RNA sequence: GGGAACGACUCGAGUAGAGUCGAAAAGAUAUGGAGCAUGACCCGAAACUAAGCUCAACAGCUCGGAAACGAGACAUGAGCGAUGUUUCGCAUGCUCCUAAGUCAAAGUAGUGGUUCGCCACUACAAGUUAAGCCGUAAGUUCGCUUACGGCUUAACAAAAGAAACAACAACAACAAC
Reactivity to 2A3 in 0.01 (KOAc 150mM, MgCl2 10mM, bicine 150mM(pH8.5), 24C), signal-to-noise 4, nucleotides 027 to 126: g040a030u070a050u150g000g000a010g000c000a000u010g040a190c050c050c070g010a010a010a000c020u080a100a000g010c000u000c020a030a070c120a110g040c000u010c000g010g040a080a070a060c020g010a000g080a040c060a160u130g000a010g000c010g020a030u190g010u000u000u010c000g000c000a000u000g000c000u000c000c000u010a000a010g010u000c010a030a080a070g000u010a000g000u000g080g050u020u090c300g070c080c000a010c020u010a010c000a020a000
Reactivity to DMS in 0.01 (KOAc 150mM, MgCl2 10mM, bicine 150mM(pH8.5), 24C), signal-to-noise 4, nucleotides 027 to 126: g000a050u000a300u000g010g000a020g020c000a010u000g000a160c170c210c070g000a000a010a020c000u010a250a300g000c000u010c000a020a130c300a120g000c000u000c010g000g000a130a060a230c010g000a000g010a020c140a120u000g000a000g010c000g000a160u000g000u000u000u000c000g010c010a000u000g000c010u000c010c000u000a020a050g010u000c050a090a120a100g010u000a010g010u000g000g010u010u010c220g020c000c000a000c000u000a000c000a050a090